[RMDB]
RNA sequence: GGGAACGACUCGAGUAGAGUCGAAAACUGGUCGGUGGCGAUUGGCCUGCUGACGCUCGGCAUGCUGAUGACUAACGGGAUAUCCGCGCUGCAAAACACCACGGUGAUUAUGGGGCUGCCGUUCAGCCCAGGGUGCUAAAUUCGUUUAGCACCCUGGAAAAGAAACAACAACAACAAC
Reactivity to DMS in 0.01 (KOAc 150mM, MgCl2 10mM, bicine 150mM(pH8.5), 24C), signal-to-noise 7, nucleotides 027 to 126: c050u000g020g010u000c030g020g020u000g010g020c040g010a110u010u000g010g010c030c030u000g030c030u000g020a120c240g020c110u010c050g010g000c030a030u000g030c020u000g010a060u010g010a150c100u010a100a120c090g000g010g000a090u010a090u010c010c030g010c070g000c060u000g010c090a060a050a080a120c100a060c050c020a090c090g020g000u000g000a110u000u010a060u010g010g000g000g010c010u000g010c070c050g010u000u000c040a040g000c120
Reactivity to 2A3 in 0.01 (KOAc 150mM, MgCl2 10mM, bicine 150mM(pH8.5), 24C), signal-to-noise 5, nucleotides 027 to 126: c020u030g020g030u030c020g020g030u040g020g030c040g080a170u030u100g050g000c010c010u010g010c010u030g030a080c080g050c120u070c020g030g000c020a020u060g020c010u040g020a080u070g050a090c030u020a070a020c030g030g000g080a140u080a060u170c020c010g000c020g000c020u070g020c020a020a040a090a110c040a020c030c020a050c060g000g030u050g020a140u070u180a090u210g040g000g000g020c000u010g000c000c010g040u060u040c020a030g020c000